RNA sequence: GGGAACGACUCGAGUAGAGUCGAAAAUGCCAGUCUGAGGGAGGAAGUGAUCCUUCACUCGGAUGUGCCAGGACAGGUAGUAGCAUUGCUGACUCAUCGGAUGCCCUCACGCACAUUCCUGACGCGACGUGUUGGCACAGUUCGCUGUGCCAACACGAAAAGAAACAACAACAACAAC
Reactivity to 2A3 in 0.01 (KOAc 150mM, MgCl2 10mM, bicine 150mM(pH8.5), 24C), signal-to-noise 1, nucleotides 027 to 126: u000g020c010c000a000g100u000c020u150g000a020g010g010g010a000g000g000a070a150g140u180g170a300u100c020c040u010u000c080a160c100u010c010g000g000a050u060g000u020g040c000c000a060g080g140a060c050a090g040g000u020a060g020u090a050g000c000a020u040u170g070c050u030g090a050c030u040c050a130u030c030g040g020a080u070g010c000c000c000u030c040a010c000g050c010a000c000a120u060u120c000c000u010g060a020c000g030c040g090a050
Reactivity to DMS in 0.01 (KOAc 150mM, MgCl2 10mM, bicine 150mM(pH8.5), 24C), signal-to-noise 1, nucleotides 027 to 126: u000g010c020c070a250g020u000c030u000g010a030g010g020g000a000g000g020a030a300g030u000g000a160u000c010c000u000u000c000a100c010u000c010g040g010a000u010g020u000g000c050c050a080g000g010a030c220a110g000g000u000a080g020u000a130g020c000a030u000u000g020c120u010g000a100c100u000c050a130u000c020g000g020a080u000g000c030c020c060u000c030a040c070g000c030a120c120a160u000u000c040c020u010g000a100c080g000c060g010a210
Chemical mapping of a 177-nucleotide RNA with 2A3 and DMS. Values are in units of 0.01, from 0 to 300, in steps of 10. The 2A3 profile rests on 884 reads. Conditions: 150 mM KOAc, 10 mM MgCl2 and 150 mM bicine (pH 8.5), 24 C.